[RMDB]
Conditions: 150 mM KOAc, 10 mM MgCl2 and 150 mM bicine (pH 8.5), 24 C. An RNA of 207 nucleotides, treated with 2A3 and read out base by base. For 2A3 the reverse transcriptase was SuperScript II with manganese. For 2A3, 835 sequencing reads were counted.

RNA sequence: GGGAACGACUCGAGUAGAGUCGAAAAACGCGGAGAACGCUCCGCGACAACACUUCUUUCGACCCGCUAACCGAGACCUAUGGGUCGUUAAAUUACGUCUCUAUCUUACUCACAUAACAUCGCACAAAAAACGUGGUUCGGUUCGCCGAACCACGAAGGAUAGCUAUUCGUUCGCGAAUAGCUAUCCAAAAGAAACAACAACAACAAC
Reactivity to 2A3 in 0.01 (KOAc 150mM, MgCl2 10mM, bicine 150mM(pH8.5), 24C), signal-to-noise 2, nucleotides 027 to 156: a000c000g000c000g030g020a010g080a180a100c060g160c250u000c020c000g000c000g020a000c010a030a080c030a010c100u180u130c050u090u260u100c010g000a000c000c000c000g130c160u130a060a000c070c030g020a000g000a030c000c000u070a060u140g000g000g000u000c000g020u000u000a000a010a030u140u100a010c020g010u030c010u000c030u000a120u110c070u120u160a060c050u070c040a050c000a160u220a240a000c010a170u170c080g070c070a020c130a050a080a100a060a060a030c070g000u000g000g000u020u000c000g010g040u040u060c200g020c050c000g000a000a000c000c000a000c000g000a000a000